[RMDB]
RNA sequence: GGGAACGACUCGAGUAGAGUCGAAAAACGUUUGACGUUAUAGAACAAUAUAAUGUACUAGAUGAUAUUAUAAAGCCUUUAUCUAAACCAACCUAUCUUCGAAGGACCGUCUGGCGUUAAAUGGUUCGAUAUAAAGGAGAAGGAAAAUGAACAUCGGCGUGUAAAUGAAAUUCGUUUCAUUUACACGAAAAGAAACAACAACAACAAC
Reactivity to 2A3 in 0.01 (KOAc 150mM, MgCl2 10mM, bicine 150mM(pH8.5), 24C), signal-to-noise 5, nucleotides 027 to 156: a000c080g010u100u060u160g060a010c010g000u010u040a040u040a110g060a210a040c020a080a020u050a010u040a110a090u060g010u030a100c030u040a100g050a060u020g010a030u080a070u250u220a120u120a090a140a070g030c010c000u050u090u070a070u030c100u130a050a060a080c050c030a020a030c020c000u120a230u090c020u040u010c030g100a120a070g010g030a030c000c020g050u030c080u100g070g020c010g030u030u100a020a060a030u040g000g000u030u030c030g020a010u040a010u030a210a040a010g010g000a020g010a010a030g020g030a040a040a010a070u100g010a030a040c020a070u100c040g050g000
Reactivity to DMS in 0.01 (KOAc 150mM, MgCl2 10mM, bicine 150mM(pH8.5), 24C), signal-to-noise 2, nucleotides 027 to 156: a050c060g030u000u010u010g020a090c030g040u010u010a130u000a110g000a100a130c070a110a220u000a020u010a040a070u000g010u000a140c040u000a150g030a190u000g000a090u000a080u000u010a070u000a110a080a250g010c010c010u000u000u000a080u020c120u020a070a090a120c040c030a040a140c030c010u000a110u000c030u000u000c050g020a080a120g000g000a050c010c020g030u000c050u000g020g020c000g030u000u000a020a040a090u010g010g040u000u000c050g010a090u000a090u010a030a070a120g000g000a100g000a100a070g020g020a100a040a080a110u000g000a080a080c080a090u000c030g060g000